Annotation:
The record gives the reactivity of an RNA of 177 nucleotides to DMS and 2A3. For DMS, 1,714 sequencing reads were counted. The RNA was probed in 150 mM KOAc, 10 mM MgCl2 and 150 mM bicine (pH 8.5) at 24 C.

[RMDB]
RNA sequence: GGGAACGACUCGAGUAGAGUCGAAAAGAUAUGGAACGGUAUCGCUCGAAGAACUAUAUCGGAAACGAUAUAGGGAGAGCAUACACGUUCCUAAGUCAAAACGCAAGUACAGUUCGCUGUACUUGCGGCUGAUAGACCGGUUCGCCGGUCUAUCAGCAAAAGAAACAACAACAACAAC
Reactivity to DMS in 0.01 (KOAc 150mM, MgCl2 10mM, bicine 150mM(pH8.5), 24C), signal-to-noise 2, nucleotides 027 to 126: g010a030u000a300u010g010g000a030a010c020g000g000u000a000u010c300g040c000u000c000g000a130a190g000a070a230c000u000a000u000a000u000c000g000g000a200a120a170c010g010a000u000a000u000a030g000g000g000a040g010a010g040c030a050u000a010c010a190c010g000u010u000c000c000u000a010a140g000u000c040a070a060a120a240c000g000c010a030a000g020u000a020c010a010g000u010u030c300g050c000u000g000u010a000c000u000u000g020c010g000
Reactivity to 2A3 in 0.01 (KOAc 150mM, MgCl2 10mM, bicine 150mM(pH8.5), 24C), signal-to-noise 2, nucleotides 027 to 126: g000a000u040a030u110g000g000a020a000c010g010g000u020a020u080c240g010c010u040c040g300a300a030g000a020a000c010u010a000u000a000u020c040g000g000a040a040a040c020g010a000u010a000u000a010g000g000g000a030g000a000g000c010a000u020a000c070a010c020g010u010u000c000c000u000a020a020g010u010c000a040a060a000a110c020g000c000a000a010g020u000a010c000a000g010u020u140c260g110c160u020g000u030a000c000u000u000g000c000g000